[RMDB]
RNA sequence: GGGAACGACUCGAGUAGAGUCGAAAAUGGACGUGGGUACACAGUUGAGAUCAGGGGUGAACAGCUUAAAAGAGUGAGCUUAAACCAUACUGUACAUAAUCUCGUUCUCAAAGCAGAGGUGAAAUAGCCCCUAGUUAGUGUGCAUAGGGUGCAUGGAAUUUUACUGGCGUUUCGACGCCAGUAAAAUAAAAGAAACAACAACAACAAC
Reactivity to DMS in 0.01 (KOAc 150mM, MgCl2 10mM, bicine 150mM(pH8.5), 24C), signal-to-noise 2, nucleotides 027 to 156: u000g000g000a060c040g050u000g040g010g030u000a070c000a070c070a110g030u000u000g010a130g010a080u010c010a100g000g000g030g010u000g020a100a160c080a140g000c040u000u010a030a060a120a090g020a100g000u000g000a050g050c080u000u000a050a090a070c040c060a160u010a100c040u000g020u000a080c060a070u000a100a070u000c000u000c020g020u000u000c020u000c020a150a090a070g040c060a060g000a070g020g040u000g010a070a050a120u000a280g020c000c020c010c020u000a040g000u000u010a110g000u010g000u020g000c060a090u000a040g000g000g060u010g000c030a050u000g010g000a080
Reactivity to 2A3 in 0.01 (KOAc 150mM, MgCl2 10mM, bicine 150mM(pH8.5), 24C), signal-to-noise 2, nucleotides 027 to 156: u080g020g030a020c060g070u120g030g000g020u070a030c030a010c030a070g070u110u100g050a040g010a050u060c070a050g000g000g000g020u010g020a040a020c030a020g020c010u060u170a030a080a070a030g050a030g010u070g010a010g010c020u030u060a040a020a010c010c010a030u080a110c030u050g050u110a030c030a090u120a080a080u050c050u020c080g010u040u020c020u020c000a100a090a000g040c040a010g020a010g000g020u060g040a070a020a020u080a040g020c000c000c000c000u020a020g020u050u060a080g000u070g020u020g020c010a010u030a020g050g010g000u070g030c010a010u040g060g050a100